Description
Chemical mapping of a 177-nucleotide RNA with DMS and 2A3. For 2A3 the reverse transcriptase was SuperScript II with manganese.
[RMDB]
RNA sequence: GGGAACGACUCGAGUAGAGUCGAAAAAGCCAUGCUCACUAGUACUCGCAUGAUCACGUACGUACAGCGUAUCUCAUGCCAUGGUACUGCCAUGACUAGCGAUACAUGCUAGAUGACAUGCUAGACACCAUCCAGGUGUGUUCGCACACCUGGAUGGAAAAGAAACAACAACAACAAC
Reactivity to DMS in 0.01 (KOAc 150mM, MgCl2 10mM, bicine 150mM(pH8.5), 24C), signal-to-noise 2, nucleotides 027 to 126: a070g000c060c110a000u010g020c130u000c050a070c060u000a030g020u000a050c120u000c100g000c060a100u000g000a040u020c110a080c300g010u000a040c140g000u010a170c160a120g000c040g010u000a010u000c010u000c120a160u000g000c010c020a060u000g000g000u010a100c240u010g020c040c010a020u000g000a060c010u000a250g000c030g010a100u010a030c110a110u000g000c000u000a010g000a080u000g020a030c040a000u000g020c040u000a040g000a130c140a180
Reactivity to 2A3 in 0.01 (KOAc 150mM, MgCl2 10mM, bicine 150mM(pH8.5), 24C), signal-to-noise 2, nucleotides 027 to 126: a000g070c050c010a030u080g000c010u000c060a060c030u010a030g050u080a120c030u020c060g000c000a030u040g030a150u150c100a040c070g040u130a000c040g030u150a100c120a110g040c000g030u010a020u010c040u010c030a020u060g010c000c010a030u070g060g000u160a180c060u150g030c000c000a040u040g020a030c030u040a050g000c030g030a010u050a100c100a040u180g010c000u010a030g010a180u030g030a030c000a010u030g010c000u040a040g020a060c030a010
The reactions ran in a buffer of 150 mM KOAc, 10 mM MgCl2 and 150 mM bicine (pH 8.5), at 24 C.